Source: RMDB library M2RFPK, as collected in RNAgym. An RNA of 207 nucleotides, treated with DMS and 2A3 and read out base by base. 2A3 adducts were read by reverse transcription with SuperScript II with manganese. The reactions ran in a buffer of 150 mM KOAc, 10 mM MgCl2 and 150 mM bicine (pH 8.5), at 24 C. The 2A3 profile rests on 1,426 reads.
RNA sequence: GGGAACGACUCGAGUAGAGUCGAAAAGCAGUAUCUCGUUAGGCGAGGCUCCUAUACAAACACAGGUUGCUGAUCUGACGACGUCGAGAGACGCCCAAGAUUAGGACAGGAUAUAUCGAACGAAGGUGAACCUGUCCAGGGUUCGCCCUGGACAGAAGAGUCUUAAAGUCUUCGGACUUUAAGACUCAAAAGAAACAACAACAACAAC
Reactivity to DMS in 0.01 (KOAc 150mM, MgCl2 10mM, bicine 150mM(pH8.5), 24C), signal-to-noise 1, nucleotides 027 to 156: g070c100a070g000u000a030u020c020u010c020g070u000u030a130g040g020c060g020a110g030g010c020u000c020c000u000a100u010a160c150a110a040a060c120a050c060a170g030g020u000u000g010c020u020g030a010u000c030u010g050a240c040g000a020c010g020u010c010g050a280g010a300g010a010c020g000c000c060c120a130a150g020a030u000u000a040g030g000a130c050a170g030g020a090u000a090u010a060u020c030g030a070a150c090g000a100a080g000g030u000g010a130a140c060c020u000g000u000c030c050a050g000g020g080u000u000c300g020c020c000c000u020g000g000a060c000a020g010a030a190
Reactivity to 2A3 in 0.01 (KOAc 150mM, MgCl2 10mM, bicine 150mM(pH8.5), 24C), signal-to-noise 3, nucleotides 027 to 156: g010c020a010g020u100a190u100c020u010c030g030u100u210a070g080g060c020g030a020g030g000c020u060c010c020u120a120u120a240c130a050a170a000c100a000c020a090g080g020u080u220g080c010u020g000a040u000c010u050g000a020c020g030a040c020g000u010c000g020a020g000a010g000a070c010g020c010c000c010a000a000g020a040u070u070a010g020g040a010c020a060g040g020a040u050a010u010a040u160c060g040a030a100c040g030a060a010g050g030u080g030a020a020c020c000u000g010u030c020c000a000g000g000g000u040u080c120g070c010c000c030u010g010g000a000c000a000g000a010a020